[RMDB]
RNA sequence: GGGAACGACUCGAGUAGAGUCGAAAAACAGUACCAGCUGCUACGGCAGCUGAUACUGAACUUUCAUGGAGUUAAGAAACCACGUAAACAAAGCGGAACCGAAAAGCUAAACGAGUAGGAAGAAUAAAUAGGUACCACCACUUCGGUGGUGGUACAACACAUCCACUAGCUUCGGCUAGUGGAUGUGAAAAGAAACAACAACAACAAC
Reactivity to 2A3 in 0.01 (KOAc 150mM, MgCl2 10mM, bicine 150mM(pH8.5), 24C), signal-to-noise 2, nucleotides 027 to 156: a000c000a000g000u000a000c000c000a000g020c000u000g010c000u060a050c230g150g000c010a000g000c010u000g000a000u000a000c000u000g000a040a060c050u100u080u050c070a120u100g050g040a090g040u100u120a110a040g080a060a050a000c030c000a020c100g070u130a060a030a080c080a130a140a000g040c000g020g040a050a040c010c010g050a020a000a000a000g020c100u160a100a070a020c010g000a000g000u030a010g100g030a030a060g090a060a070u170a090a080a060u190a080g100g010u000a000c000c000a000c000c000a000c010u020u040c170g060g000u000g000g000u000g000g030u000a000c000a010a000